[RMDB]
RNA sequence: GGGAACGACUCGAGUAGAGUCGAAAACCCACUGCUCGAGGGCCUCCUCCCUCGCCUUCGAGCCGGGUCUUGCAUCGGGUUGGCUCAUCCUGAGACCGGGGAGCUUCGACGAUCUCUUGUCUCUCCUAGCGUCCAAGGUUCGCCUUGGACAAAAGAAACAACAACAACAAC
Reactivity to DMS in 0.01 (KOAc 150mM, MgCl2 10mM, bicine 150mM(pH8.5), 24C), signal-to-noise 8, nucleotides 027 to 129: c030c010c030a170c060u030g030c000u020c020g000a000g000g000g000c050c120u060c080c070u060c050c000c010u030c090g000c010c010u000u000c040g030a070g020c010c050g030g010g020u030c000u050u050g070c040a100u040c050g050g000g010u000u000g050g000c040u000c050a140u060c040c040u020g030a150g030a060c010c020g030g000g010g000a040g000c100u000u040c080g000a060c020g000a140u030c010u010c040u000u040g030u020c020u030c040u060c020c010u050a100g050c140
Reactivity to 2A3 in 0.01 (KOAc 150mM, MgCl2 10mM, bicine 150mM(pH8.5), 24C), signal-to-noise 9, nucleotides 027 to 129: c000c000c000a020c040u050g000c000u000c010g010a020g000g010g000c000c030u110c010c000u050c010c030c010u030c030g010c000c000u010u030c010g010a010g000c000c000g030g000g020u020c050u060u150g060c020a080u040c030g020g000g010u040u060g050g000c000u010c030a120u070c010c030u080g040a050g030a090c040c030g000g000g000g000a040g030c020u080u060c020g070a070c030g040a080u010c000u010c000u010u020g010u000c000u000c000u010c010c010u030a050g080c030

This 170-nucleotide RNA was probed chemically with DMS and 2A3.
DMS adducts were read by reverse transcription with MarathonRT.
The RNA was probed in 150 mM KOAc, 10 mM MgCl2 and 150 mM bicine (pH 8.5) at 24 C.